RNA sequence: GGGAACGACUCGAGUAGAGUCGAAAAAUCGAAGUCUUAGUGACUGUCGAUGGUGUAAAUUUUAGAACAGUCGUUCUAAAUAAUAAGAACACUUAUAGAUCACAGCUUGGAUGCGUUUUCUUUAAUGACACAGUAUGCUUCGGCAUACUGAAAAGAAACAACAACAACAAC
Reactivity to 2A3 in 0.01 (KOAc 150mM, MgCl2 10mM, bicine 150mM(pH8.5), 24C), signal-to-noise 6, nucleotides 027 to 129: a000u010c020g010a010a000g080u000c010u120u210a100g020u110g110a030c030u020g140u050c050g030a040u090g020g000u040g000u040a150a170a130u030u030u010u020a020g000a020a010c030a090g300u180c100g000u110u000c010u000a000a000a030u160a040a010u160a140a030g120a110a010c020a010c000u060u070a080u070a080g060a030u060c040a020c020a070g020c020u050u070g070g020a060u100g080c030g060u040u020u040u010c010u020u090u070a180a120u180g030a020c030a000
Reactivity to DMS in 0.01 (KOAc 150mM, MgCl2 10mM, bicine 150mM(pH8.5), 24C), signal-to-noise 8, nucleotides 027 to 129: a020u000c030g010a050a010g000u010c020u020u010a170g000u000g000a000c000u020g010u010c080g000a050u010g000g040u020g030u000a060a070a100u000u020u010u010a000g010a000a000c040a260g010u080c180g000u000u000c010u000a010a020a010u010a080a110u030a130a070g000a110a050c020a050c000u000u000a100u020a080g030a040u030c010a070c090a020g040c070u010u020g000g000a060u050g000c140g030u010u010u010u010c020u000u000u000a060a060u000g030a130c210a230